[RMDB]
RNA sequence: GGGAACGACUCGAGUAGAGUCGAAAACUACUCUGGAGGCUGACACAGGAGAAUUGCUUGAACCUGGCAGGCAGACAUUGCAGUGAGCCGAGAUGGUGCUGCUGCACUCCAGCCUGGGUGCAGAGUACAUAAUAAUCGACUUCGGUCGAUUAUUAUGAAAAGAAACAACAACAACAAC
Reactivity to DMS in 0.01 (KOAc 150mM, MgCl2 10mM, bicine 150mM(pH8.5), 24C), signal-to-noise 9, nucleotides 027 to 126: c060u000a050c040u000c020u000g000g010a070g010g010c020u010g010a100c140a120c160a100g000g010a070g000a110a100u010u000g000c060u000u000g000a090a120c050c030u000g010g000c050a050g000g010c030a040g000a080c140a100u010u000g010c030a030g010u000g000a200g020c010c020g010a130g000a120u010g020g020u000g010c060u000g010c000u000g000c000a050c050u000c020c020a060g000c050c030u000g010g010g030u000g010c010a030g000a050g000u000a070
Reactivity to 2A3 in 0.01 (KOAc 150mM, MgCl2 10mM, bicine 150mM(pH8.5), 24C), signal-to-noise 4, nucleotides 027 to 126: c010u030a000c010u000c010u040g110g040a040g050g000c020u030g040a050c050a020c030a210g090g030a030g050a070a130u130u070g030c020u030u050g030a070a090c010c020u020g090g000c020a000g000g000c010a010g020a060c070a110u060u140g000c010a000g010u050g180a010g010c010c030g060a090g030a170u240g050g030u080g000c030u050g000c000u010g000c000a020c010u030c010c010a030g020c000c010u080g040g010g030u090g050c020a000g000a000g020u010a010